This 177-nucleotide RNA was probed chemically with DMS and 2A3. It was measured as part of the RMDB libraries RFM100 and RFMREP. The RNA was probed in 150 mM KOAc, 10 mM MgCl2 and 150 mM bicine (pH 8.5) at 24 C. For 2A3 the reverse transcriptase was SuperScript II with manganese.

RNA sequence: GGGAACGACUCGAGUAGAGUCGAAAAUACAACUAUGACUGCUCCAGUUGGCCUUCGGGUCGGCUGGGAAUUUUUGAAACCUUUACACUUUUUUGUGCUUUUCGUUGAUUUUUGCGGCCUUGAGCUGCAUGGGGUUAUUCUUCGGAAUAACCCCAUGAAAAGAAACAACAACAACAAC
Reactivity to DMS in 0.01 (KOAc 150mM, MgCl2 10mM, bicine 150mM(pH8.5), 24C), signal-to-noise 3, nucleotides 027 to 126: u050a080c070a080a070c090u010a060u000g000a080c070u000g000c120u040c000c000a000g000u000u000g010g010c000c000u000u050c190g030g010g050u010c000g000g010c000u030g000g000g010a020a010u010u000u000u000u000g010a080a090a100c090c030u010u030u020a130c060a030c030u000u030u030u000u010u020g020u010g000c100u000u000u010u000c100g010u000u000g000a090u010u000u030u010u010g000c010g000g010c000c010u020u020g000a100g020c000u000g000
Reactivity to 2A3 in 0.01 (KOAc 150mM, MgCl2 10mM, bicine 150mM(pH8.5), 24C), signal-to-noise 4, nucleotides 027 to 126: u070a020c020a040a020c030u140a090u260g100a060c070u080g020c020u040c020c000a000g000u000u000g000g000c000c010u000u010c190g040g000g000u000c000g000g000c000u010g010g000g030a000a020u060u050u020u030u190g070a080a070a030c010c000u080u180u180a060c050a040c060u070u130u090u080u140u170g050u050g060c040u030u050u020u120c070g020u010u050g070a260u050u040u060u070u090g010c000g010g000c010c010u160u290g050a060g000c000u000g000

Reactivities are given for positions 27 through 126. High 2A3 reactivity points to a flexible backbone, as in loops and unpaired stretches.